[RMDB]
RNA sequence: GGGAACGACUCGAGUAGAGUCGAAAAGAAAGUGUGCACUUGAUACCGCGUGACUUCGGUCACGUAGUGGCAGCGCGCAGGACUUUGCUGCCACUGCUUAGUCCUGAGGUAUCUUGUGCUCACGAAAAUCCUACCUAUUAUUCGUAAUAGGUAGGAUAAAAGAAACAACAACAACAAC
Reactivity to DMS in 0.01 (KOAc 150mM, MgCl2 10mM, bicine 150mM(pH8.5), 24C), signal-to-noise 9, nucleotides 027 to 126: g010a100a100a160g010u000g000u000g000c000a000c000u010u000g000a010u000a000c010c000g010c030g000u010g010a020c000u000u050c160g020g010u000c020a010c020g010u010a000g010u000g000g000c030a020g010c010g020c230g010c080a080g010g010a100c140u020u030u020g010c000u000g000c010c020a020c010u000g000c120u020u020a060g000u010c030c040u010g000a240g000g000u000a000u000c000u000u000g000u000g010c010u000c000a000c000g010a050a050a090
Reactivity to 2A3 in 0.01 (KOAc 150mM, MgCl2 10mM, bicine 150mM(pH8.5), 24C), signal-to-noise 9, nucleotides 027 to 126: g150a020a090a020g000u000g000u010g000c000a000c000u000u000g000a000u000a000c000c010g010c020g020u030g010a010c010u040u090c240g100g000u020c010a010c020g000u010a000g000u000g030g000c030a010g010c090g020c050g000c130a060g030g050a060c060u170u190u280g000c000u010g010c010c010a010c010u010g000c010u080u180a050g030u080c000c040u060g020a040g020g000u000a000u000c000u000u000g000u000g000c000u000c000a000c000g020a060a010a000